[RMDB]
RNA sequence: GGGAACGACUCGAGUAGAGUCGAAAAGACGGGAGUUCAAUGGUAAAGAGGCGAAGAACCUCGGAGGUUCCCUCCCAAGAAGGUUCAAGAGAAUACAAGAAAUGGAGGAAUUUCCCCAUAACGCCGGAGGGGACGGGGUUCGCCCCGUCCAAAAGAAACAACAACAACAAC
Reactivity to DMS in 0.01 (KOAc 150mM, MgCl2 10mM, bicine 150mM(pH8.5), 24C), signal-to-noise 5, nucleotides 027 to 129: g010a100c080g070g020g000a110g050u100u020c000a070a060u100g030g040u080a060a130a050g000a060g000g040c100g020a090a140g040a070a030c000c000u000c050g070g000a040g020g050u000u090c070c040c020u040c000c000c000a080a120g060a110a110g100g010u020u020c040a080a120g030a110g030a050a070u000a070c140a050a060g040a110a000a040u020g030g020a040g040g030a070a050u000u000u070c070c000c020c090a100u080a100a060c110g000c000c030g020g010a090g020g010
Reactivity to 2A3 in 0.01 (KOAc 150mM, MgCl2 10mM, bicine 150mM(pH8.5), 24C), signal-to-noise 3, nucleotides 027 to 129: g050a010c060g000g040g000a090g030u080u090c000a040a080u160g010g000u070a130a040a000g060a030g010g010c060g070a060a000g010a070a060c000c000u010c030g020g000a040g000g000u040u030c000c000c000u030c010c030c000a030a030g070a020a000g020g000u120u130c100a070a030g070a000g030a060a100u180a100c050a000a030g110a080a020a030u150g000g030a020g070g050a030a080u030u030u050c000c000c010c000a110u130a110a030c100g010c050c010g030g000a020g000g020

Chemical mapping of a 170-nucleotide RNA with DMS and 2A3. 2A3 adducts were read by reverse transcription with SuperScript II with manganese. For 2A3, 4,950 sequencing reads were counted. The RNA was probed in 150 mM KOAc, 10 mM MgCl2 and 150 mM bicine (pH 8.5) at 24 C. It was measured as part of the RMDB library 15KLIB. For DMS, 7,245 sequencing reads were counted.